[RMDB]
RNA sequence: GGGAACGACUCGAGUAGAGUCGAAAAGAUAUGGACCUCUUCCACCUACCCACCCUAUUUGCUCGGAAACGAGCAUUUAGGAGGGUGGAGAGAGGUCCUAAGUCAAAGGCUCUGUUCGCAGAGCCAAGCAAUUAUAGCUCUUCGGAGCUAUAAUUGCAAAAGAAACAACAACAACAAC
Reactivity to 2A3 in 0.01 (KOAc 150mM, MgCl2 10mM, bicine 150mM(pH8.5), 24C), signal-to-noise 1, nucleotides 027 to 126: g050a040u100a090u190g000g000a000c000c010u000c010u030u000c010c000a020c010c000u090a170c040c010c040a070c010c030c000u000a000u010u000u000g000c000u010c020g000g090a030a150a090c000g000a000g000c020a010u000u010u000a000g020g000a010g050g000g010u010g000g000a050g020a020g000a000g030g010u000c000c000u010a080a010g030u000c050a100a010a150g020g010c000u000c010u010g030u120u160c300g050c110a000g010a000g020c020c000a000a000
This 177-nucleotide RNA was probed chemically with 2A3. Reactivities are rounded to 0.1 and cut off at 0 and 3. For 2A3, 3,315 sequencing reads were counted.